[RMDB]
RNA sequence: GGGAACGACUCGAGUAGAGUCGAAAAUUUCUCCUAUUCGUAGGAGAAAGAAGGACCACCCGGGAGGGUUAAGGCCUUACGGACAGCCGGGUCCACUGCCGAUAAGGGCUGAGUUCGCUCAGCCCAACUUCUAUGUUAUAUUCGUAUAACAUAGAAGAAAAGAAACAACAACAACAAC
Reactivity to DMS in 0.01 (KOAc 150mM, MgCl2 10mM, bicine 150mM(pH8.5), 24C), signal-to-noise 5, nucleotides 027 to 126: u000u000u000c000u010c000c000u000a020u000u010c160g020u000a000g000g000a010g000a000a000a020g010a160a120g010g010a030c010c010a070c010c000c000g010g040g000a180g020g010g000u000u000a060a040g010g020c000c010u000u010a120c030g000g010a020c020a300g000c020c010g010g010g010u000c000c010a080c130u010g010c010c010g010a260u020a100a110g000g010g020c000u000g010a020g000u000u020c210g010c000u000c000a010g010c000c000c000a010a020
Reactivity to 2A3 in 0.01 (KOAc 150mM, MgCl2 10mM, bicine 150mM(pH8.5), 24C), signal-to-noise 5, nucleotides 027 to 126: u000u000u000c000u010c000c000u010a030u050u070c190g060u030a010g010g000a020g000a010a000a010g030a010a080g010g010a010c000c010a010c020c010c000g040g070g040a080g040g020g000u050u200a110a090g040g000c020c000u060u130a050c010g010g020a020c010a010g010c020c000g030g000g010u000c010c010a010c040u060g000c010c010g010a030u100a100a210g000g010g000c000u000g000a000g010u070u140c220g040c070u000c000a000g000c020c000c010a000a000